[RMDB]
RNA sequence: GGGAACGACUCGAGUAGAGUCGAAAAAGGGGCAACCCUCGGAGACGGCGCUGAUCCUUCCGGUGGCUCGCAGGACGACAGGAAGCAAUGUGCGCAGUCGAACAAUUGUUCAGCCACCAAGAUCGAAGCGUAAUCAUAUCUUCGGAUAUGAUUACGCAAAAGAAACAACAACAACAAC
Reactivity to 2A3 in 0.01 (KOAc 150mM, MgCl2 10mM, bicine 150mM(pH8.5), 24C), signal-to-noise 2, nucleotides 027 to 126: a000g050g000g000g010c050a060a060c000c000c000u020c000g080g020a070g000a020c020g010g000c030g000c080u110g040a020u040c000c000u100u080c080c030g090g000u030g040g000c030u020c040g000c050a070g040g020a030c000g020a010c000a020g140g050a100a010g000c060a060a190u200g040u080g100c070g030c040a020g040u060c020g000a040a000c020a110a180u080u020g050u110u040c030a050g000c020c000a020c010c010a050a060g060a100u090c080g020a030a020
Reactivity to DMS in 0.01 (KOAc 150mM, MgCl2 10mM, bicine 150mM(pH8.5), 24C), signal-to-noise 2, nucleotides 027 to 126: a030g040g010g000g010c220a100a140c010c010c000u000c090g030g010a170g000a040c050g010g000c100g030c030u010g020a000u010c100c040u000u020c020c050g010g010u010g000g000c010u000c070g040c080a070g000g000a220c040g000a030c020a100g040g010a100a090g030c090a100a060u000g060u010g000c050g020c050a070g010u000c020g010a040a120c110a110a090u000u000g000u010u000c060a060g020c040c020a040c020c020a070a110g000a050u000c060g000a120a090